[RMDB]
RNA sequence: GGGAACGACUCGAGUAGAGUCGAAAAGAUAUGGACUAGGAAGAAGCUGCGCUGCGUUGAAACUGAAUGCUUUCGGAAACGAAAGCAUUCAGUGGAGCAGCGACCCAGUGUAAACUAGUCCUAAGUCCGAAAUAUAGUUGUUCGCAACUAUAUUUCGAAAAGAAACAACAACAACAAC
Reactivity to 2A3 in 0.01 (KOAc 150mM, MgCl2 10mM, bicine 150mM(pH8.5), 24C), signal-to-noise 3, nucleotides 027 to 126: g080a000u150a060u250g000g000a000c000u000a000g040g000a130a300g030a020a000g080c000u040g010c000g000c020u010g000c010g170u300u050g050a130a080a000c010u010g000a000a000u010g000c000u010u020u010c020g030g040a050a080a040c010g000a010a000a000g000c000a000u000u010c000a000g010u000g000g010a000g000c000a000g010c000g000a000c000c010c000a020g000u030g000u130a020a010a000c010u000a000g000u020c010c000u000a000a010g020u030c030
Reactivity to DMS in 0.01 (KOAc 150mM, MgCl2 10mM, bicine 150mM(pH8.5), 24C), signal-to-noise 6, nucleotides 027 to 126: g000a110u010a300u010g020g000a030c000u000a000g000g010a070a150g000a210a300g000c010u000g030c010g030c000u000g000c010g020u010u020g020a200a130a020c000u000g000a020a010u010g000c000u000u000u000c000g000g000a140a080a200c010g020a010a010a000g000c000a000u010u000c000a000g010u000g000g010a110g020c000a020g020c000g010a040c270c300c050a010g020u000g000u000a030a140a300c010u000a000g010u000c000c000u000a030a100g010u000c050
Conditions: 150 mM KOAc, 10 mM MgCl2 and 150 mM bicine (pH 8.5), 24 C.
An RNA of 177 nucleotides, treated with 2A3 and DMS and read out base by base.
For 2A3, 9,763 sequencing reads were counted.
For DMS the reverse transcriptase was MarathonRT.
Reactivities are given for positions 27 through 126.
2A3 adducts were read by reverse transcription with SuperScript II with manganese.
For DMS, 4,059 sequencing reads were counted.